[RMDB]
Source information:
Structure probing data (2A3) for a 207-nucleotide construct.
RNA sequence: GGGAACGACUCGAGUAGAGUCGAAAAGGUUGCUCCUGAGAACAAUAGAGCAGACCAGGUACUCACUGUGUCCAAGUGGCGUUCAGAAAUUUUGUCUUGGACCGUGGAGCAAUACAAAUAAAAAAGACAUAACAUGACAAGACAGCUUUGACUAUGAACUGGCAUUACGUUUCGACGUAAUGCCAGUAAAAGAAACAACAACAACAAC
Reactivity to 2A3 in 0.01 (KOAc 150mM, MgCl2 10mM, bicine 150mM(pH8.5), 24C), signal-to-noise 1, nucleotides 027 to 156: g040g050u000u000g000c000u020c000c010u040g080a120g020a120a070c110a070a080u110a000g110a000g020c050a010g020a030c000c050a000g140g020u060a020c010u090c000a070c070u080g040u060g050u300c000c020a000a040g010u020g170g040c030g000u010u030c150a050g200a010a120a020u160u300u080u250g020u010c010u000u000g020g000a000c020c000g030u010g000g040a040g040c000a020a010u150a080c080a010a040a060u300a000a150a020a000a000a000g010a000c000a030u110a040a000c010a040u080g040a020c000a020a000g050a000c000a010g000c000u120u140u260g000a090c050u000a050u220g070a020
The RNA was probed in 150 mM KOAc, 10 mM MgCl2 and 150 mM bicine (pH 8.5) at 24 C.